[RMDB]
This 207-nucleotide RNA was probed chemically with DMS and 2A3. As a SHAPE reagent, 2A3 marks flexible, mostly unpaired nucleotides at the ribose 2'-OH.
RNA sequence: GGGAACGACUCGAGUAGAGUCGAAAAACUUGUAUAGGCGAUUAAUAAAUCUUCUGUAAAUGCUGUAAGAGGAUUACCCCUUCAGGUUUCAGCACUAGGCUGCUCUAGCGAUUAAUCAAUGCAUUUGUAACGGAAAGACAGUUCGCUGUCUUUCCAACGUACUGUAUCCGUUCGCGGAUACAGUACGAAAAGAAACAACAACAACAAC
Reactivity to DMS in 0.01 (KOAc 150mM, MgCl2 10mM, bicine 150mM(pH8.5), 24C), signal-to-noise 1, nucleotides 027 to 156: a030c020u000u000g000u000a060u000a060g030g000c060g000a080u010u010a050a110u000a120a070a120u010c000u000u000c030u010g010u010a030a060a070u000g020c080u000g010u010a120a100g000a010g060g000a100u000u000a100c010c000c010c030u000u000c070a100g040g020u000u000u000c010a080g000c010a040c020u010a100g020g000c030u000g010c150u010c060u000a020g020c030g020a120u000u000a150a120u000c030a150a230u010g020c030a130u030u000u010g010u010a080a160c040g030g030a000a060a040g000a040c000a040g030u000u010c240g080c000u000g000u030c010u010u000u000c000c000a030a020
Reactivity to 2A3 in 0.01 (KOAc 150mM, MgCl2 10mM, bicine 150mM(pH8.5), 24C), signal-to-noise 3, nucleotides 027 to 156: a020c050u100u050g090u080a210u110a130g050g000c040g060a100u050u120a160a060u170a170a140a060u050c020u050u030c000u050g110u130a080a120a110u170g030c060u030g090u160a040a010g030a010g020g000a010u030u090a060c010c020c000c000u000u020c020a010g010g040u000u000u080c010a020g000c010a000c100u100a040g190g070c040u010g000c020u060c000u090a040g020c040g090a070u020u170a060a040u070c100a050a120u100g060c040a060u040u040u130g100u070a070a020c030g000g010a010a000a010g000a000c010a010g010u000u110c190g010c120u000g000u000c000u000u000u000c000c000a000a000